[RMDB]
RNA sequence: GGGAACGACUCGAGUAGAGUCGAAAAGAUAUGGAAGGUACAGUUUCGAUAAGAUCCGGUCGGAAACGACCGAAGAUCUUUUGACGAAACUGACCUUCCUAAGUCAAAACCUCCCUUCGGGGAGGAAGUGAGAUACUAUGUUCGCAUAGUAUCUCACAAAAGAAACAACAACAACAAC
Reactivity to 2A3 in 0.01 (KOAc 150mM, MgCl2 10mM, bicine 150mM(pH8.5), 24C), signal-to-noise 6, nucleotides 027 to 126: g000a010u060a030u130g000g020a010a000g010g000u170a300c010a030g000u010u000u010c050g030a100u060a170a010g000a000u010c010c000g010g000u010c020g020g030a120a080a070c020g000a000c020c010g000a020a010g010a000u020c000u020u070u050u100g200a110c060g000a010a000a000c000u000g000a000c000c000u000u000c000c000u000a000a000g000u010c000a010a030a090a170c010c000u010c020c000c000u010u060c300g030g000g000g010a000g000g010a010a010
Reactivity to DMS in 0.01 (KOAc 150mM, MgCl2 10mM, bicine 150mM(pH8.5), 24C), signal-to-noise 4, nucleotides 027 to 126: g000a040u010a300u010g000g010a020a000g010g000u000a150c020a020g010u000u000u000c000g020a180u010a020a020g010a010u000c010c020g020g000u000c000g020g000a130a080a180c010g010a010c000c000g000a030a080g010a000u000c000u000u000u010u010g010a230c160g000a010a010a000c000u000g000a040c000c000u010u000c000c000u000a000a060g000u010c030a110a070a150a140c000c000u000c000c000c010u000u010c200g040g010g010g000a010g000g000a000a010
Conditions: 150 mM KOAc, 10 mM MgCl2 and 150 mM bicine (pH 8.5), 24 C. Chemical mapping of a 177-nucleotide RNA with 2A3 and DMS. It was measured as part of the RMDB library TTRDES. The 2A3 profile rests on 19,324 reads.